[RMDB]
RNA sequence: GGGAACGACUCGAGUAGAGUCGAAAAGGGAGACGGGGAUCCCGGGCUUACCCACGGGAACUGCUGGGUUCCCCUGAUGUCCAGUCCCUCCCCGCUCCUGGAGAAGGGAGACUCGGGAACGCCUAGCACGCAGCUGAGUUCGCUCAGCUGAAAAGAAACAACAACAACAAC
Reactivity to 2A3 in 0.01 (KOAc 150mM, MgCl2 10mM, bicine 150mM(pH8.5), 24C), signal-to-noise 9, nucleotides 027 to 129: g030g000g010a020g010a040c030g000g000g000g000a010u050c030c030c010g010g020g010c030u070u130a120c010c000c010a040c070g010g000g010a030a030c050u110g060c070u130g110g050g000u020u030c000c000c000c000u020g040a080u150g080u020c010c000a010g040u030c000c000c000u010c000c000c000c000g010c010u020c000c010u040g050g040a100g030a090a060g030g010g000a030g010a010c020u000c020g000g000g020a040a020c030g020c010c000u020a030g040c060a020c110g030
Reactivity to DMS in 0.01 (KOAc 150mM, MgCl2 10mM, bicine 150mM(pH8.5), 24C), signal-to-noise 9, nucleotides 027 to 129: g020g010g010a020g000a180c170g030g020g030g020a050u030c040c040c090g010g010g020c070u020u040a130c040c050c020a100c300g030g020g040a030a060c080u040g010c060u050g040g020g040u000u000c010c000c010c030u000g030a090u040g010u040c060c100a070g010u010c000c000c000u030c000c000c010c020g010c050u000c000c020u000g020g030a090g030a100a100g030g020g010a050g010a090c040u000c040g030g000g030a030a030c120g000c050c040u040a040g000c130a100c160g040

Structure probing data (2A3 and DMS) for a 170-nucleotide construct. The RNA was probed in 150 mM KOAc, 10 mM MgCl2 and 150 mM bicine (pH 8.5) at 24 C.